The data come from the RNA Mapping Database (RMDB), library TTRINS. This 177-nucleotide RNA was probed chemically with DMS. For DMS the reverse transcriptase was MarathonRT.
RNA sequence: GGGAACGACUCGAGUAGAGUCGAAAAGAUAUGGAGUAGUGGCUUGUAUCAAGAUCGAUAAGUCAACUGUUUCGGAAACGAAAUUUGACUUUUGACGAUCGACAUACAAGCCACUACUCCUAAGUCACAUUGUUUAGCACUUCGGUGCUAAACAAUGAAAAGAAACAACAACAACAAC
Reactivity to DMS in 0.01 (KOAc 150mM, MgCl2 10mM, bicine 150mM(pH8.5), 24C), signal-to-noise 3, nucleotides 027 to 126: g010a080u000a300u000g000g000a010g020u000a000g040u000g000g010c000u010u040g000u000a000u000c040a060a300g000a000u010c000g020a190u010a020a000g000u000c010a010a050c300u020g030u000u000u000c000g010g020a170a060a180c010g000a010a010a020u000u000u000g000a000c000u000u020u010u000g010a200c210g000a010u000c000g000a300c300a010u010a010c010a030a010g000c000c000a000c000u000a020c020u000c000c000u000a000a090g000u000c050a140